The record gives the reactivity of an RNA of 177 nucleotides to 2A3 and DMS. Conditions: 150 mM KOAc, 10 mM MgCl2 and 150 mM bicine (pH 8.5), 24 C. For 2A3 the reverse transcriptase was SuperScript II with manganese. The data come from the RNA Mapping Database (RMDB), library M2PK50. The DMS profile rests on 647 reads. The 2A3 profile rests on 1,367 reads. Values cover nucleotides 27 to 126.
[RMDB]
RNA sequence: GGGAACGACUCGAGUAGAGUCGAAAAUCAGGAGUCUUCGGACUCCUGAAAAGAGGUACGAAUCCCACCCGAACCGCGGGUAGCGGCCCAAAAAUAAAAUAAAAAGGGUUAAGUUCGCUUAACCCAACAUUACCGCAAGGUUCGCCUUGCGGUAAUGAAAAGAAACAACAACAACAAC
Reactivity to 2A3 in 0.01 (KOAc 150mM, MgCl2 10mM, bicine 150mM(pH8.5), 24C), signal-to-noise 1, nucleotides 027 to 126: u020c000a000g020g000a000g000u000c020u030u070c300g100g000a000c010u000c000c010u000g000a000a010a000a010g080a000g040g010u110a060c040g040a110a070u040c010c000c020a000c000c030c000g050a060a060c080c030g090c000g140g000g060u050a050g050c010g020g040c000c010c030a050a110a020a000a010u200a080a090a030a020u300a050a030a020a060a020g040g000g000u000u020a010a000g020u000u100c230g000c050u020u000a000a010c000c000c010a000a000
Reactivity to DMS in 0.01 (KOAc 150mM, MgCl2 10mM, bicine 150mM(pH8.5), 24C), signal-to-noise 1, nucleotides 027 to 126: u000c000a040g010g000a090g000u000c000u000u020c150g000g010a000c000u000c030c000u000g010a000a020a070a130g030a090g030g000u010a090c130g000a210a160u000c010c020c000a240c120c000c010g030a160a160c090c110g010c010g000g010g010u000a000g010c030g020g020c020c020c060a010a020a050a120a110u020a080a070a090a040u010a040a060a100a150a180g000g000g000u000u000a020a000g020u000u000c170g000c000u000u000a000a010c000c000c000a040a070